Chemical mapping of a 177-nucleotide RNA with 2A3 and DMS. It was measured as part of the RMDB library OK1LIB. DMS adducts were read by reverse transcription with MarathonRT. The reactions ran in a buffer of 150 mM KOAc, 10 mM MgCl2 and 150 mM bicine (pH 8.5), at 24 C. Values cover nucleotides 27 to 126.
RNA sequence: GGGAACGACUCGAGUAGAGUCGAAAAGUACUAUCACCAUCGUACCUAAUUGCCGUGUCAUUUAUAUGGUUAGGUACUAGGAUGGCUGUGUAAAUGACGCGUAGUAUCUAUCCGAUGGUGAUAGUAGGCUUGACUUAGAUUUCGAUCUAGGUCGAGCAAAAGAAACAACAACAACAAC
Reactivity to 2A3 in 0.01 (KOAc 150mM, MgCl2 10mM, bicine 150mM(pH8.5), 24C), signal-to-noise 9, nucleotides 027 to 126: g030u000a000c000u000a000u000c000a000c000c000a000u000c010g020u040a040c010c030u090a080a070u120u080g020c010c000g000u000g000u000c000a010u000u020u020a030u010a000u020g020g010u010u020a040g070g110u090a060c040u040a040g100g060a040u030g020g000c000u000g000u000g000u020a000a020a020u020g010a000c010g000c010g010u030a030g020u010a050u090c070u040a070u030c060c010g000a000u000g000g000u000g000a000u000a000g000u000a000g010
Reactivity to DMS in 0.01 (KOAc 150mM, MgCl2 10mM, bicine 150mM(pH8.5), 24C), signal-to-noise 8, nucleotides 027 to 126: g010u000a010c000u000a000u000c000a000c000c000a000u000c010g000u020a080c170c130u020a070a040u020u010g020c080c020g010u000g010u000c020a000u000u000u010a010u010a000u010g010g020u000u000a020g010g010u020a060c150u040a070g010g010a090u010g000g000c010u000g020u000g000u000a000a000a010u000g000a010c010g000c000g020u020a060g010u010a040u020c140u010a160u020c130c010g000a010u000g000g010u000g000a010u000a000g000u000a010g010